[RMDB]
RNA sequence: GGGAACGACUCGAGUAGAGUCGAAAAGCGUACUACUAUGCAUGUAGAGGAGCAACAGCUCUAUAUUGGUAAGUUCCCAAAUAGGAACUUACAGGUAGAGACAUGCUCCUUGAGAUGCAUAGUAUCGCAAACAGUGGCUGGUUCGCCAGCCACUGAAUCCAUGAAUAAUCUUCGGAUUAUUCAUGGAAAAAGAAACAACAACAACAAC
Reactivity to DMS in 0.01 (KOAc 150mM, MgCl2 10mM, bicine 150mM(pH8.5), 24C), signal-to-noise 3, nucleotides 027 to 156: g020c020g020u010a060c110u000a020c000u000a000u010g010c000a020u010g000u000a300g000a000g010g020a030g020c000a030a110c070a210g020c010u010c000u010a020u000a060u000u010g090g010u000a020a020g010u000u000c000c000c010a040a130a260u010a040g000g010a030a010c010u000u000a010c010a030g030g020u000a010g000a010g010a060c060a300u000g000c000u000c030c000u000u000g010a270g010a060u000g000c010a020u000a030g010u010a000u000c000g000c020a100a080a130c020a020g010u010g030g030c030u000g010g010u010u010c300g000c050c000a000g000c010c000a010c010u000g000a050a110
Reactivity to 2A3 in 0.01 (KOAc 150mM, MgCl2 10mM, bicine 150mM(pH8.5), 24C), signal-to-noise 4, nucleotides 027 to 156: g010c000g040u090a060c020u000a000c000u000a020u000g000c000a000u010g010u040a000g000a000g000g010a000g000c010a010a110c050a180g010c000u010c010u010a050u030a140u080u220g200g000u020a000a000g000u000u000c000c030c000a120a170a060u250a080g000g000a000a000c000u000u000a000c000a000g030g030u000a000g000a000g020a050c020a070u050g000c000u000c000c000u000u000g000a020g000a000u000g000c000a000u000a000g000u000a000u010c000g000c000a010a020a030c000a000g000u000g000g000c000u000g070g020u080u100c180g080c080c000a000g000c000c000a000c000u000g000a000a020
Structure probing data (DMS and 2A3) for a 207-nucleotide construct. For 2A3 the reverse transcriptase was SuperScript II with manganese. For 2A3, 6,594 sequencing reads were counted.